[RMDB]
RNA sequence: GGGAACGACUCGAGUAGAGUCGAAAAAGCCGAGGCGCUACGGCGCCUCAGCAAAAAAACUUGUAAAGGGGCAGUCCCCUAGCCCCGCUCAAAAGGGGGAUGACGCCGAUGAUACGUCAUCGGCGAAGGACGACAGUGAUGUUCGCAUCACUGUCAAGAUAUGGAAAGGGUUCGCCCUUUCCAUAUCAAAAGAAACAACAACAACAAC
Reactivity to 2A3 in 0.01 (KOAc 150mM, MgCl2 10mM, bicine 150mM(pH8.5), 24C), signal-to-noise 1, nucleotides 027 to 156: a000g000c000c020g000a010g020g000c000g000c020u020a030c150g120g000c010g000c070c000u000c010a000g000c000a000a040a070a050a070a000a000c190u300u250g140u300a080a190a190g000g000g000g020c020a030g150u020c000c000c000c000u000a020g010c000c000c010c040g020c010u000c030a020a030a010a010g000g000g050g000g000a010u070g070a010c000g050c010c010g000a000u010g000a000u000a050c230g050u000c010a000u010c020g000g000c000g000a000a000g120g040a050c100g020a000c000a000g000u000g000a000u010g010u050u100c210g020c070a000u000c000a000c000u000g000u000c000a000a010

Chemical mapping of a 207-nucleotide RNA with 2A3. The data come from the RNA Mapping Database (RMDB), library M2RFPK. The RNA was probed in 150 mM KOAc, 10 mM MgCl2 and 150 mM bicine (pH 8.5) at 24 C. Values cover nucleotides 27 to 156.